[RMDB]
RNA sequence: GGGAACGACUCGAGUAGAGUCGAAAAAUGUCGAGAAUGAGAGAAUCUCGUUAAAUACUUUCAAAACUUAUAGUUGCAAACGACGACAACUACGCUUUAGCGGCUUAAUUCCCGCUUUCGCUUACCUAGAUUUGUCUGUGGGUUUACCGUAAGCGACGCUAUGGUUAGCGUUCGCGCUAACCAUAGCAAAAGAAACAACAACAACAAC
Reactivity to 2A3 in 0.01 (KOAc 150mM, MgCl2 10mM, bicine 150mM(pH8.5), 24C), signal-to-noise 6, nucleotides 027 to 156: a010u170g080u110c010g000a000g000a010a010u040g000a020g000a010g010a030a050u040c000u000c000g040u000u000a020a040a010u080a230c010u010u010u020c010a090a090a040a020c040u110u090a050u030a110g010u000u000g000c020a080a130a100c080g050a010c010g030a030c020a040a010c030u100a040c030g020c040u080u090u130a030g010c000g020g010c010u060u130a050a030u160u130c000c000c000g000c000u010u060u040c010g000c000u040u040a040c000c030u040a050g020a220u080u100u110g090u060c090u050g040u070g030g030g010u020u040u040a010c030c000g010u030a010a000g010c000g020a030c080
Reactivity to DMS in 0.01 (KOAc 150mM, MgCl2 10mM, bicine 150mM(pH8.5), 24C), signal-to-noise 2, nucleotides 027 to 156: a080u020g010u010c010g010a030g010a050a200u020g020a080g030a060g000a070a130u000c000u000c010g030u010u000a010a030a030u000a120c030u000u040u020c000a130a110a120a160c100u010u000a080u000a080g000u000u000g010c000a090a090a070c080g030a120c040g000a070c020a050a040c040u000a010c060g010c090u000u000u000a060g010c020g010g030c050u000u010a070a190u000u010c060c000c000g030c070u000u000u000c000g030c030u000u000a030c040c040u000a070g000a060u000u000u000g020u000c080u010g030u000g010g010g010u000u000u000a010c070c020g020u000a010a030g010c000g020a080c260

Structure probing data (2A3 and DMS) for a 207-nucleotide construct. It was measured as part of the RMDB library RSTRND. The reactions ran in a buffer of 150 mM KOAc, 10 mM MgCl2 and 150 mM bicine (pH 8.5), at 24 C. The 2A3 profile rests on 5,951 reads. High DMS reactivity at an A or C suggests that its Watson-Crick edge is free.